[RMDB]
About this RNA: Chemical mapping of a 177-nucleotide RNA with DMS and 2A3. The 2A3 profile rests on 7,202 reads. DMS adducts were read by reverse transcription with MarathonRT.
RNA sequence: GGGAACGACUCGAGUAGAGUCGAAAAGGGGACGUUCUGGGCUCAGAGGGGGUGGGGGACGUUUGCCGGUCACUGCUGCUGGCGCCCUGACUGUUGCCGUCCUCCAGCCCCACUCAAAGGCAUCCAACAUACAAGCGCUAUUCGUAGCGCUUGUAUGAAAAGAAACAACAACAACAAC
Reactivity to DMS in 0.01 (KOAc 150mM, MgCl2 10mM, bicine 150mM(pH8.5), 24C), signal-to-noise 3, nucleotides 027 to 126: g010g010g010g010a100c080g000u000u000c020u020g000g010g000c010u010c030a300g010a060g010g010g010g010g010u000g000g000g000g000g000a020c000g000u020u040u000g000c010c030g000g000u000c010a090c130u000g000c070u010g000c040u010g010g010c060g020c030c040c080u000g010a020c000u000g000u010u020g000c070c000g020u000c000c000u000c000c000a000g000c020c000c010c000a010c040u010c050a060a080a110g020g010c030a110u010c030c060a110a230
Reactivity to 2A3 in 0.01 (KOAc 150mM, MgCl2 10mM, bicine 150mM(pH8.5), 24C), signal-to-noise 6, nucleotides 027 to 126: g040g000g010g010a030c030g020u060u040c050u050g010g030g000c050u070c120a030g010a020g030g010g000g010g020u010g010g000g000g000g000a000c000g010u050u140u120g020c010c000g000g000u000c020a020c080u100g020c020u060g020c020u100g070g020c020g020c020c000c000u010g010a010c010u030g070u150u100g020c000c000g000u000c000c000u020c000c010a120g090c010c000c000c000a030c010u010c000a040a060a020g020g000c000a030u050c020c010a030a050
The reactions ran in a buffer of 150 mM KOAc, 10 mM MgCl2 and 150 mM bicine (pH 8.5), at 24 C.
For DMS, 6,797 sequencing reads were counted.
Source: RMDB library RFM100, as collected in RNAgym.